[RMDB]
Chemical mapping of a 177-nucleotide RNA with 2A3. Conditions: 150 mM KOAc, 10 mM MgCl2 and 150 mM bicine (pH 8.5), 24 C. The data come from the RNA Mapping Database (RMDB), library RFM100.
RNA sequence: GGGAACGACUCGAGUAGAGUCGAAAAUGGGGCCUUAGCAGGGCGCCAGGCUAAUGAGGGUCACUCAAAGGGGCUGAUCAAAUAUUCAAAUUUCCCCUCACGCCGGGAACUUUUAUGCACCAGGAAAGGACAUAGGGUCAUUCGUGACCCUAUGUCCAAAAGAAACAACAACAACAAC
Reactivity to 2A3 in 0.01 (KOAc 150mM, MgCl2 10mM, bicine 150mM(pH8.5), 24C), signal-to-noise 1, nucleotides 027 to 126: u020g060g000g000g000c000c000u090u010a030g070c070a070g010g000g000c000g000c000c010a010g000g000c040u120a250a000u030g010a090g090g080g120u110c030a010c020u010c000a000a000a110g020g000g030g000c050u000g070a060u060c040a070a260a150u150a180u160u050c050a010a000a010u030u050u050c030c000c000c000u000c000a000c020g090c000c000g010g000g020a000a000c010u000u020u010u050a090u070g070c000a000c020c040a020g000g070a170a000a060